[RMDB]
RNA sequence: GGGAACGACUCGAGUAGAGUCGAAAAGAUAUGGACGAAACUACCCACCGAACUACUCGAUAAUGAUCGGAAACGAUCAUUAACGAGCGAGGUUUCGUCCUAAGUCAAACCAUCGUUCGCGAUGGAAGUUUAAAAGGACGUUCGCGUCCUUUUAAACAAAAGAAACAACAACAACAAC
Reactivity to DMS in 0.01 (KOAc 150mM, MgCl2 10mM, bicine 150mM(pH8.5), 24C), signal-to-noise 4, nucleotides 027 to 126: g000a150u000a120u000g010g020a020c000g010a030a000a000c010u000a110c040c030c050a300c100c020g000a020a030c040u010a190c000u010c000g000a090u000a000a010u000g000a000u000c010g000g000a040a040a140c000g000a000u000c000a000u000u000a010a040c000g000a010g010c050g010a070g010g010u000u000u000c010g010u010c000c000u000a010a110g010u010c100a090a110a160c010c000a010u000c000g010u000u010c190g010c010g000a010u010g000g010a010a060
Reactivity to 2A3 in 0.01 (KOAc 150mM, MgCl2 10mM, bicine 150mM(pH8.5), 24C), signal-to-noise 4, nucleotides 027 to 126: g090a080u190a140u300g010g000a000c010g010a000a010a000c050u200a240c070c000c050a010c030c020g020a100a060c060u210a040c010u300c010g000a000u010a010a000u000g000a010u000c000g040g040a060a050a000c020g000a010u010c000a000u000u000a000a010c010g010a010g010c000g030a040g000g000u020u010u000c000g000u000c000c010u020a070a000g100u090c080a070a060a110c000c000a010u000c000g050u100u060c300g010c020g140a020u010g000g020a010a060
This 177-nucleotide RNA was probed chemically with DMS and 2A3. It was measured as part of the RMDB library TTRDEL. Values cover nucleotides 27 to 126. DMS adducts were read by reverse transcription with MarathonRT.